[RMDB]
The record gives the reactivity of an RNA of 177 nucleotides to 2A3 and DMS. It was measured as part of the RMDB library OK2TST. For 2A3, 817 sequencing reads were counted.
RNA sequence: GGGAACGACUCGAGUAGAGUCGAAAACAGUGGCCGCUAUCGUCAUGCAUUUCGCCUAUCCUGCUGCUAUCCAUUUAACAGCCGUUAUACUGGCGCAUUGGAGCGAUUGGGGGCGGUUGCAUGUGAAUACCUCCGUUCGAUUCGUCGAACGGAGGUAAAAAGAAACAACAACAACAAC
Reactivity to 2A3 in 0.01 (KOAc 150mM, MgCl2 10mM, bicine 150mM(pH8.5), 24C), signal-to-noise 1, nucleotides 027 to 126: c010a020g120u120g050g000c100c000g050c020u030a010u170c000g130u000c060a000u010g020c010a010u090u170u140c000g010c000c000u010a200u180c000c000u010g040c040u080g010c000u090a150u160c010c060a070u000u170u100a060a160c070a060g040c020c000g000u070u020a150u090a300c190u200g010g000c030g010c010a000u040u120g010g000a040g000c000g080a060u100u170g010g000g000g000g000c000g070g010u040u030g000c000a000u010g010u010g010a030a070
Reactivity to DMS in 0.01 (KOAc 150mM, MgCl2 10mM, bicine 150mM(pH8.5), 24C), signal-to-noise 1, nucleotides 027 to 126: c150a100g030u010g030g030c030c040g040c060u020a090u000c030g050u020c000a000u000g000c000a030u000u000u000c000g050c000c000u000a070u010c050c030u000g020c080u000g020c000u000a130u000c050c080a040u000u010u010a140a130c140a260g020c030c060g000u000u000a080u010a120c220u000g000g050c120g030c130a080u020u010g020g000a050g000c010g000a060u010u000g000g000g000g010g000c000g030g010u000u030g010c020a000u000g000u000g000a110a120